[RMDB]
RNA sequence: GGGAACGACUCGAGUAGAGUCGAAAACACGAACGUUGGCUAAUCCUGGUCGGACAUCAGGAGGUUAGUGCAAUGGCAUAAGCCAACUUGGCGCUAAUAGAUACUAAUCGUAGCAUAGCUGAAUAAACGCUAAUUACGAGUUCGCUCGUAAUUAGCGAAAAGAAACAACAACAACAAC
Reactivity to DMS in 0.01 (KOAc 150mM, MgCl2 10mM, bicine 150mM(pH8.5), 24C), signal-to-noise 2, nucleotides 027 to 126: c020a100c040g000a120a180c300g000u000u000g000g010c070u010a060a120u000c000c010u000g000g000u000c100g060g000a300c100a000u000c000a010g000g020a070g000g000u000u000a000g000u000g000c060a200a060u000g010g040c000a100u050a080a100g020c000c000a000a070c080u010u050g080g020c000g000c010u000a040a040u010a000g000a100u000a090c030u020a070a040u030c100g050u010a020g030c040a140u010a000g020c040u090g010a080a120u010a000a080a160
Reactivity to 2A3 in 0.01 (KOAc 150mM, MgCl2 10mM, bicine 150mM(pH8.5), 24C), signal-to-noise 3, nucleotides 027 to 126: c090a020c010g040a200a000c060g070u000u010g000g000c040u040a000a080u000c030c020u000g040g000u000c140g190g000a110c030a020u020c040a000g000g020a020g040g030u080u080a050g040u000g010c000a100a100u180g200g000c000a050u060a140a010g000c000c000a000a050c040u040u110g070g000c000g000c030u040a040a070u080a300g070a020u130a040c030u130a130a070u040c030g030u030a000g060c000a080u140a030g000c020u020g090a090a000u150a080a090a030